[RMDB]
RNA sequence: GGGAACGACUCGAGUAGAGUCGAAAAUAGCGAAGUAGGAUUUUAUGCGUCAAGUGUUCACAGGCUGGGGAGUCGCCGUGAAACGAAAAGCAGAAAGCGUGCUGCUUACGAUAUAAUUUCCGCGCCCAUAAGAAGUCUCUGUUCGCAGAGACUUCAACCUGGUUCUGAAGUUCGCUUCAGAACCAGGAAAAGAAACAACAACAACAAC
Reactivity to 2A3 in 0.01 (KOAc 150mM, MgCl2 10mM, bicine 150mM(pH8.5), 24C), signal-to-noise 2, nucleotides 027 to 156: u170a000g020c020g000a040a010g110u150a100g030g040a020u020u030u010u020a010u050g000c000g000u030c020a030a070g020u060g030u210u020c040a020c100a150g030g000c040u090g050g030g020g030a050g090u080c010g000c040c000g010u000g000a040a020a010c020g040a000a020a020a060g000c000a000g020a040a180a030g170c090g070u130g020c000u000g010c000u000u020a020c010g020a020u020a010u010a100a020u010u000u010c030c000g000c030g010c030c010c000a070u110a130a090g020a000a000g000u000c000u010c000u000g050u070u030c200g010c080a010g000a000g000a000c030u000u000c000a000a000

Background:
Source: RMDB library M2RFPK, as collected in RNAgym. Structure probing data (2A3) for a 207-nucleotide construct. For 2A3 the reverse transcriptase was SuperScript II with manganese. Reactivities are rounded to 0.1 and cut off at 0 and 3.